[RMDB]
RNA sequence: GGGAACGACUCGAGUAGAGUCGAAAAUUGAGGAACAUACGUGGUUGGAAGAGAAGCGUUACCGAGGGCUUGACCAUGCAGUUCACAUGGAAGAACUUGGCGAUAUUCGCUCUUGGUUUGCUUUGCACAUCCCUGACCAGUUCGCUGGUCAGGGAUGAAAAGAAACAACAACAACAAC
Reactivity to 2A3 in 0.01 (KOAc 150mM, MgCl2 10mM, bicine 150mM(pH8.5), 24C), signal-to-noise 2, nucleotides 027 to 126: u060u070g020a080g050g030a130a020c020a070u140a080c110g010u050g020g020u050u040g060g070a090a030g070a030g020a060a000g000c060g120u070u050a030c000c010g000a000g030g020g000c000u060u100g030a110c030c000a040u150g030c030a040g040u060u060c050a040c060a090u150g130g040a100a090g010a080a060c010u040u030g020g000c030g050a060u020a100u190u100c050g000c000u030c000u000u020g050g000u020u000u070g010c000u020u000u030g000c020a020
Reactivity to DMS in 0.01 (KOAc 150mM, MgCl2 10mM, bicine 150mM(pH8.5), 24C), signal-to-noise 2, nucleotides 027 to 126: u000u020g030a050g010g000a020a050c110a080u000a080c080g020u020g000g000u020u010g020g000a070a090g000a140g010a030a060g010c040g020u000u000a050c020c010g030a040g000g010g040c010u030u000g000a140c040c050a060u000g030c110a050g000u000u000c120a150c120a090u020g020g020a080a120g000a010a020c110u000u000g030g020c050g020a100u000a040u000u000c150g000c020u000c010u000u020g000g010u000u010u010g010c010u000u010u010g020c100a100